An RNA of 207 nucleotides, treated with DMS and 2A3 and read out base by base. As a SHAPE reagent, 2A3 marks flexible, mostly unpaired nucleotides at the ribose 2'-OH. For DMS the reverse transcriptase was MarathonRT. For 2A3 the reverse transcriptase was SuperScript II with manganese.
RNA sequence: GGGAACGACUCGAGUAGAGUCGAAAACUAUGGCUUCAAUUGGAUUAUUAGGAUUCUUAGUAUGAUCACAUCAUAUGUAUAUUGUAGGAUUAGAUGCAGAUCUUAGAGCAUAUUUCCUAUCUGCACUAAUGAUUAUUGCAAUUCCAACAGGAAUUAAUGAAUUGCUGUCUUUCGAGACAGCAAUUCAAAAAGAAACAACAACAACAAC
Reactivity to DMS in 0.01 (KOAc 150mM, MgCl2 10mM, bicine 150mM(pH8.5), 24C), signal-to-noise 1, nucleotides 027 to 156: c000u000a090u000g010g010c010u030u000c250a120a240u030u000g000g000a280u000u000a090u010u000a040g000g000a080u000u010c010u000u000a240g070u000a000u000g000a070u000c110a030c030a300u000c030a040u040a010u000g000u000a040u000a070u010u010g040u000a090g000g040a130u000u000a070g010a090u030g030c040a040g010a000u000c210u010u010a040g000a110g030c130a040u000a070u010u000u030c040c040u000a090u000c010u000g000c010a080c000u000a030a010u030g000a170u000u030a050u000u050g000c010a000a040u000u000c030c030a160a180c250a220g010g000a040a000u000u000a000a250
Reactivity to 2A3 in 0.01 (KOAc 150mM, MgCl2 10mM, bicine 150mM(pH8.5), 24C), signal-to-noise 2, nucleotides 027 to 156: c020u060a070u140g050g030c040u110u040c060a060a090u050u100g050g000a040u130u120a120u120u060a080g090g000a020u080u000c010u030u050a050g010u000a060u070g010a020u130c050a010c000a120u020c000a000u020a010u110g070u100a090u050a080u110u120g030u030a020g010g070a010u010u020a010g110a140u000g010c000a000g010a010u000c030u050u090a050g000a040g010c030a060u050a180u230u090u060c000c010u040a060u000c010u020g000c020a000c000u000a030a020u100g070a080u010u100a000u260u110g030c040a010a010u000u020c020c000a110a060c010a220g040g000a040a020u020u050a100a060